[RMDB]
RNA sequence: GGGAACGACUCGAGUAGAGUCGAAAAAGUUCAGCAACGCGGUGUUUUAUUACGACGAAGAAGAGAAAAUUGCCGAUGUGGCGAUCGGUAAACUCAACAUUCAGGCCGGAGAGAAAAUCGCCAUUCACGAUUAGUGCUAGUUCGCUAGCACUAAUCGAAAAGAAACAACAACAACAAC
Reactivity to DMS in 0.01 (KOAc 150mM, MgCl2 10mM, bicine 150mM(pH8.5), 24C), signal-to-noise 3, nucleotides 027 to 126: a090g010u000u010c050a140g040c100a050a060c110g010c030g000g000u000g030u010u010u000u000a080u010u010a120c050g050a080c070g000a070a060g000a090a110g010a060g000a040a090a090a270u000u000g010c010c020g010a040u010g010u000g040g000c070g010a040u000c000g010g010u000a020a050a070c040u020c020a030a140c120a120u010u010c080a080g020g000c040c010g030g000a090g010a130g000a050a020a060a060u010c040g020c020c050a060u000u020c150a110
Reactivity to 2A3 in 0.01 (KOAc 150mM, MgCl2 10mM, bicine 150mM(pH8.5), 24C), signal-to-noise 2, nucleotides 027 to 126: a010g010u030u010c000a040g000c040a070a030c040g030c030g070g040u020g050u100u110u070u020a170u110u150a040c060g000a000c040g030a040a020g040a070a000g020a030g090a010a040a070a200u060u050g040c010c010g030a030u070g020u020g020g010c030g020a020u000c000g000g030u040a020a030a030c010u010c020a050a030c040a080u050u110c010a020g040g030c010c020g040g000a040g000a000g060a090a000a020a110u020c020g020c030c000a040u180u080c100a060